Description: An RNA of 207 nucleotides, treated with 2A3 and read out base by base. 2A3 adducts were read by reverse transcription with SuperScript II with manganese. The reactions ran in a buffer of 150 mM KOAc, 10 mM MgCl2 and 150 mM bicine (pH 8.5), at 24 C. It was measured as part of the RMDB library OK3TST.
RNA sequence: GGGAACGACUCGAGUAGAGUCGAAAAGAUGGGUCCGAUGGAUUAAUGCGUCGCCUGCCAUUGGAUCCUGAUUGAUAGAUUGACGGCGACGGUCGGAUCACUCGGUAAUUCGGUGCUCUACGAGUGAUCCGUGAUGAUAGUUAAGAAGAGCACCUAACGAUCCUAUGGAUUUCGAUCCAUAGGAUCGAAAAGAAACAACAACAACAAC
Reactivity to 2A3 in 0.01 (KOAc 150mM, MgCl2 10mM, bicine 150mM(pH8.5), 24C), signal-to-noise 2, nucleotides 027 to 156: g130a060u140g000g020g000u010c010c000g010a000u000g000g010a020u180u170a180a080u300g060c000g000u000c000g000c010c020u040g000c000c000a000u000u010g000g000a000u010c040c000u000g040a040u000u080g010a020u040a170g110a120u040u120g100a030c070g010g000c000g000a000c000g000g010u030c010g000g000a000u000c000a010c000u000c000g030g120u200a090a120u140u060c070g020g000u000g000c000u030c020u010a010c000g010a000g010u000g000a000u000c000c000g000u000g000a010u010g000a010u020a130g240u230u180a210a050g090a020a000g000a040g000c000a000c000c000u000a000a000